Structure probing data (2A3 and DMS) for a 177-nucleotide construct.
RNA sequence: GGGAACGACUCGAGUAGAGUCGAAAAGGAAGCUCACGAUAGGGACAAUGAGCCAAAUAUGGAAAUAGGAAUGCACUGUUGCAAUCCUUAUUCCUGUGAUUUCUGGGCAUAUUGUACAAAAGAAUUGGACCGAUAUUAGUUUCGACUAAUAUCGGUCAAAAGAAACAACAACAACAAC
Reactivity to 2A3 in 0.01 (KOAc 150mM, MgCl2 10mM, bicine 150mM(pH8.5), 24C), signal-to-noise 7, nucleotides 027 to 126: g060g010a070a050g040c010u020c050a060c110g120a090u180a140g160g000g020a020c010a080a190u100g030a020g020c010c000a000a120a010u160a070u140g000g000a000a020a050u020a030g010g010a000a030u010g000c020a020c200u300g170u300u150g020c000a060a000u000c000c000u010u030a040u030u020c000c000u030g040u060g120a120u020u140u090c130u120g050g010g040c050a020u060a070u120u090g040u050a020c060a040a070a040a050g150a070a140u190u180g060
Reactivity to DMS in 0.01 (KOAc 150mM, MgCl2 10mM, bicine 150mM(pH8.5), 24C), signal-to-noise 5, nucleotides 027 to 126: g000g010a180a140g000c050u010c040a100c180g000a110u030a080g000g000g010a070c030a030a040u000g010a050g030c000c010a030a080a050u020a060u060g020g000a010a020a300u000a010g010g010a020a070u000g030c000a090c300u050g050u020u000g020c000a030a020u000c000c010u000u000a180u000u000c000c000u000g000u020g000a110u020u010u010c140u010g000g000g020c020a060u020a030u000u000g000u010a060c120a100a070a090a080g000a110a110u050u020g010

DMS (dimethyl sulfate) methylates the pairing face of unpaired adenines and cytosines.